[RMDB]
An RNA of 177 nucleotides, treated with 2A3 and DMS and read out base by base.
RNA sequence: GGGAACGACUCGAGUAGAGUCGAAAAGGCUGGCUCCUGCUUGCAGUCCCAGCUUCCGGAAUGAGAGGGAGAGCGCAGCAUCUGGCUCCACACGAUCAUCCAGUACAUUUCACCACAUUGUCUGCAGGACUCUGACUAUGUUCGCAUAGUCAGAGUCAAAAGAAACAACAACAACAAC
Reactivity to 2A3 in 0.01 (KOAc 150mM, MgCl2 10mM, bicine 150mM(pH8.5), 24C), signal-to-noise 1, nucleotides 027 to 126: g100g000c040u020g020g020c030u050c070c020u000g060c060u070u040g020c000a000g020u050c060c040c000a000g000c000u070u040c000c020g010g140a190a110u210g030a060g010a030g110g050g000a010g000a000g030c200g030c020a040g000c020a070u080c070u060g060g000c010u000c020c010a030c010a020c060g020a050u040c000a010u000c010c030a010g020u030a040c020a100u080u110u110c180a150c150c010a030c050a130u090u150g060u060c030u030g000c030a000g050
Reactivity to DMS in 0.01 (KOAc 150mM, MgCl2 10mM, bicine 150mM(pH8.5), 24C), signal-to-noise 1, nucleotides 027 to 126: g000g060c040u000g010g000c140u010c040c000u020g020c020u030u000g000c030a070g000u000c300c000c050a140g010c040u000u000c070c010g030g010a060a050u020g000a070g050a210g010g010g000a250g000a070g000c030g020c050a030g000c070a110u000c070u030g000g000c110u000c000c040a070c110a130c080g010a200u010c040a020u000c000c020a080g020u000a090c040a120u000u000u010c020a130c060c000a040c070a040u000u010g010u000c040u000g010c070a070g010
The 2A3 profile rests on 997 reads. The reactions ran in a buffer of 150 mM KOAc, 10 mM MgCl2 and 150 mM bicine (pH 8.5), at 24 C. It was measured as part of the RMDB library RFMREP. Values are in units of 0.01, from 0 to 300, in steps of 10.